[RMDB]
An RNA of 177 nucleotides, treated with DMS and read out base by base. Values cover nucleotides 27 to 126. The reactions ran in a buffer of 150 mM KOAc, 10 mM MgCl2 and 150 mM bicine (pH 8.5), at 24 C.
RNA sequence: GGGAACGACUCGAGUAGAGUCGAAAAUUAAUCCGGCUUUAAGUUGACGAGGGCAGGGUUUAUCGAGACAUCCGCGGGUGCCCUGCGGUCUUCCUGCGACCGUUAGAGGACUGGUAAACCAAUUUAACUAGAGGUAUCCAUUCGUGGAUACCUCUAGAAAAGAAACAACAACAACAAC
Reactivity to DMS in 0.01 (KOAc 150mM, MgCl2 10mM, bicine 150mM(pH8.5), 24C), signal-to-noise 1, nucleotides 027 to 126: u010u020a100a100u010c020c050g000g000c030u000u010u000a050a080g000u000u000g010a060c120g020a060g000g010g040c040a090g010g010g000u000u010u000a040u000c080g000a150g000a110c040a060u010c060c070g040c130g020g020g020u000g020c020c050c020u000g000c050g000g000u000c000u010u000c080c040u030g010c120g010a050c010c010g000u030u000a090g010a130g000g000a060c050u000g000g010u000a040a070a100c030c020a050a080u000u000u010a040a170